[RMDB]
RNA sequence: GGGAACGACUCGAGUAGAGUCGAAAAUGAAGUAGUUUGGCCUCUCUCCUAAGCAGUAGGACACAUCACCAUGACAUGAAACUUCCUUUGCCCAAACCUUUGAUAUCACCUCUUCUAAGUUCAAUGGCAACUGUUGCUUAGACACAAAAAGACAAAAACUAAAUCGAUGCUUCGGCAUCGAUUUAGUAAAAGAAACAACAACAACAAC
Reactivity to 2A3 in 0.01 (KOAc 150mM, MgCl2 10mM, bicine 150mM(pH8.5), 24C), signal-to-noise 1, nucleotides 027 to 156: u130g010a060a000g020u150a050g020u070u050u130g030g000c020c000u030c000u000c010u000c000c100u050a060a000g040c000a010g100u170a030g010g050a020c010a000c000a040u090c030a010c090c000a050u030g000a040c010a020u040g130a080a090a090c020u040u040c020c000u090u040u050g050c020c020c000a070a010a010c020c020u030u000u030g060a060u100a030u190c050a100c070c010u080c050u070u010c000u080a000a050g000u160u040c020a060a080u030g010g000c030a070a040c120u080g000u030u010g030c000u040u020a060g020a000c020a000c000a030a190a000a140a010g130a060c080a040a080a140a010